Chemical mapping of a 177-nucleotide RNA with 2A3. It was measured as part of the RMDB library RFM100. The RNA was probed in 150 mM KOAc, 10 mM MgCl2 and 150 mM bicine (pH 8.5) at 24 C.
RNA sequence: GGGAACGACUCGAGUAGAGUCGAAAAUUUGAAACAUACAAAAAGGAUUUUAACAAGUGCAAUUUUAAUUACAUUAAUAACUCUUUUUUCUCCCUUAAUACUUAAAAAUAGCAUAGCUUUAUAUAUUAUUGAAGUAGCAAUUCGUUGCUACUUCAAUAAAAGAAACAACAACAACAAC
Reactivity to 2A3 in 0.01 (KOAc 150mM, MgCl2 10mM, bicine 150mM(pH8.5), 24C), signal-to-noise 1, nucleotides 027 to 126: u120u000u050g030a000a170a000c000a150u250a020c050a000a000a030a000a000g000g000a000u070u000u100u100a020a000c000a040a040g000u050g050c020a060a000u000u000u040u140a140a000u260u190a000c000a000u040u050a180a190u250a300a300c000u000c000u000u000u000u000u070u000c000u120c030c000c000u030u110a030a030u140a300c060u110u300a020a050a020a020a030u030a170g040c020a040u020a040g000c010u000u160u160a070u060a020u070a040u220u070